RNA sequence: GGGAACGACUCGAGUAGAGUCGAAAAGCACAACUUUGCAGGGCAAGCCUAUUGGUAUGUUCUUCCCUUAUGACAUCGAACUUGUCACAGGAAAGCAAAAUAUUCUCCUGCGCAAGUAUGGCCGUGGUACCCCAAUCCUUCGGGAUUGGGAAAAGAAACAACAACAACAAC
Reactivity to DMS in 0.01 (KOAc 150mM, MgCl2 10mM, bicine 150mM(pH8.5), 24C), signal-to-noise 5, nucleotides 027 to 129: g000c080a060c160a120a030c060u030u000u050g020c030a040g000g010g090c250a070a020g030c080c040u030a140u110u050g050g060u030a060u110g020u050u020c160u010u020c000c020c020u000u010a100u000g010a050c040a030u000c110g010a060a040c050u000u000g040u120c060a050c050a040g050g010a000a000a000g030c130a000a080a130a050u090a120u070u020c150u020c020c020u010g010c180g010c000a070a000g020u030a070u000g000g040c090c100g050u050g040g050u030a110c100
Reactivity to 2A3 in 0.01 (KOAc 150mM, MgCl2 10mM, bicine 150mM(pH8.5), 24C), signal-to-noise 9, nucleotides 027 to 129: g060c040a030c010a080a080c020u030u020u020g000c020a000g000g000g010c030a020a020g000c000c000u110a220u090u100g020g000u070a090u140g080u060u050c000u010u020c000c000c000u020u110a190u080g030a040c020a040u090c090g040a010a050c030u040u050g070u140c050a010c010a070g010g020a030a050a020g100c140a130a070a140a070u250a150u140u060c090u000c040c000u000g000c000g000c010a000a000g020u020a140u010g080g000c040c010g050u030g000g060u140a090c020